[RMDB]
Overview:
Conditions: 150 mM KOAc, 10 mM MgCl2 and 150 mM bicine (pH 8.5), 24 C. Structure probing data (DMS and 2A3) for a 177-nucleotide construct. DMS adducts were read by reverse transcription with MarathonRT. Reactivities are given for positions 27 through 126.

RNA sequence: GGGAACGACUCGAGUAGAGUCGAAAAACGAGUAGGAUCGCUCUACGGAGCGAUCCUACUCGAAUGACCACUGCGCAAUCUGAGUUCUGGGAACCAGGUGAUGGAGUGUGCUGAGAACACUGAGGAACAAAACUUCAUACUUCGGUAUGAAGUUUUGAAAAGAAACAACAACAACAAC
Reactivity to DMS in 0.01 (KOAc 150mM, MgCl2 10mM, bicine 150mM(pH8.5), 24C), signal-to-noise 3, nucleotides 027 to 126: a110c010g000a010g030u000a010g040g030a020u000c010g070c000u000c010u000a170c150g030g010a030g010c010g030a000u010c000c000u010a020c000u000c000g000a010a040u000g000a220c010c000a050c080u010g030c040g000c130a180a060u010c040u000g000a130g010u000u000c020u010g040g010g010a050a060c020c020a030g000g000u010g000a090u030g000g000a090g000u000g010u010g020c040u010g000a110g010a120a060c070a050c070u030g020a110g000g000a130a180
Reactivity to 2A3 in 0.01 (KOAc 150mM, MgCl2 10mM, bicine 150mM(pH8.5), 24C), signal-to-noise 3, nucleotides 027 to 126: a000c010g000a000g010u000a000g020g010a010u000c010g100c000u000c000u040a130c300g000g000a000g030c000g010a000u000c000c000u000a000c030u000c000g000a000a010u010g020a000c000c000a020c050u130g040c070g030c030a060a020u030c030u060g040a050g280u150u050c090u170g270g100g000a060a070c000c030a020g000g050u000g010a090u140g060g030a040g010u020g010u020g000c090u130g050a040g030a140a020c030a010c100u110g000a100g100g090a140a020

In probing experiments dimethyl sulfate is read out at A N1 and C N3, which are open when not base-paired.